[RMDB]
Overview: This 207-nucleotide RNA was probed chemically with DMS and 2A3. It was measured as part of the RMDB library OK3TST.

RNA sequence: GGGAACGACUCGAGUAGAGUCGAAAAGUUUAUAGACUAAAAGGAGGAAGAAAUUGCAGAGCAGGGUAGGUGAUAAUUGGCAGAGCAGGGAUAAUCCCCCUUACUGGGCAAACAGAAACUGGGAAAACCUUCAGCCACAGUGGGAGGUGAGUCCUGGUCAUGCUAUGGAUUUCGAUCCAUAGCAUGAAAAAGAAACAACAACAACAAC
Reactivity to DMS in 0.01 (KOAc 150mM, MgCl2 10mM, bicine 150mM(pH8.5), 24C), signal-to-noise 2, nucleotides 027 to 156: g010u000u000u010a100u000a100g010a180c040u000a050a040a080a070g020g020a090g010g010a080a070g010a030a050a080u000u000g030c030a130g010a120g030c040a050g000g020g020u000a070g050g000u000g030a080u000a070a060u000u000g010g000c040a080g010a070g020c080a000g000g030g020a090u000a040a170u000c020c000c000c010c000u000u020a050c040u000g040g010g020c060a040a120a110c100a180g000a040a040a090c010u010g000g000g000a070a060a110a120c000c030u000u000c010a110g010c000c060a050c110a060g060u010g010g010g000a020g040g060u000g010a220g020u000c000c000u000g000g030
Reactivity to 2A3 in 0.01 (KOAc 150mM, MgCl2 10mM, bicine 150mM(pH8.5), 24C), signal-to-noise 2, nucleotides 027 to 156: g010u010u140u120a180u100a030g040a020c020u110a000a000a020a170g040g020a010g030g010a020a060g010a030a200a030u080u100g040c050a070g040a040g040c040a030g030g000g030u110a070g030g000u030g010a010u040a130a070u070u040g030g000c010a000g020a000g070c030a020g000g000g000a010u070a110a060u080c000c000c000c000c000u000u050a030c010u010g000g020g000c020a100a050a000c020a010g070a030a090a010c060u040g000g000g050a050a090a020a020c000c010u020u010c040a040g030c030c000a080c010a060g050u070g010g000g000a050g030g000u000g010a010g070u000c000c000u000g030g000

For 2A3 the reverse transcriptase was SuperScript II with manganese. The RNA was probed in 150 mM KOAc, 10 mM MgCl2 and 150 mM bicine (pH 8.5) at 24 C. The 2A3 profile rests on 1,536 reads.